[RMDB]
RNA sequence: GGGAACGACUCGAGUAGAGUCGAAAAUCGCGUUGGCUGCCUAAUUCAAGGAAUUAGCGUGCCUUCAUGCUAAGGGUUUGAUAUCUGCUAAAACCCGGUACAUUCAUCAAUGCAGGUUAAGCCAAAGAAACGGCUCACGAAUUCGUUCGUGAGCCAAGAAGACAGCUUGAUUCGUCAAGCUGUCUUCAAAAGAAACAACAACAACAAC
Reactivity to DMS in 0.01 (KOAc 150mM, MgCl2 10mM, bicine 150mM(pH8.5), 24C), signal-to-noise 2, nucleotides 027 to 156: u000c040g030c040g020u000u010g020g010c020u030g040c230c000u010a020a030u000u010c020a160a250g020g040a040a080u000u000a040g010c000g090u010g030c020c010u000u020c030a080u000g020c060u010a170a180g000g000g030u000u010u010g000a150u000a020u010c060u000g020c050u010a150a010a000a040c030c000c010g010g020u010a050c090a090u000u010c020a130u010c160a080a210u020g030c030a030g010g000u010u020a070a080g010c030c060a010a120a170g000a070a190a190c070g010g010c010u000c020a000c000g010a020a050u000u020c300g020u000u000c000g000u010g000a040g010c010c000a000a020
Reactivity to 2A3 in 0.01 (KOAc 150mM, MgCl2 10mM, bicine 150mM(pH8.5), 24C), signal-to-noise 3, nucleotides 027 to 156: u090c030g000c040g060u010u020g010g010c020u020g080c030c010u020a010a040u050u030c120a200a170g150g040a100a040u000u000a000g060c050g050u020g010c020c000u010u020c060a070u130g000c020u050a060a130g000g000g030u000u000u000g050a030u050a060u070c020u020g020c010u040a020a020a010a020c000c000c000g000g000u030a020c000a090u030u190c000a040u050c030a110a180u170g000c000a000g050g030u040u140a160a050g020c050c060a120a060a050g090a020a140a030c120g000g000c010u000c000a000c010g000a010a020u060u060c160g030u100u000c000g000u050g060a000g000c000c000a010a010
Chemical mapping of a 207-nucleotide RNA with DMS and 2A3. Values cover nucleotides 27 to 156. Source: RMDB library M2RFPK, as collected in RNAgym. DMS adducts were read by reverse transcription with MarathonRT.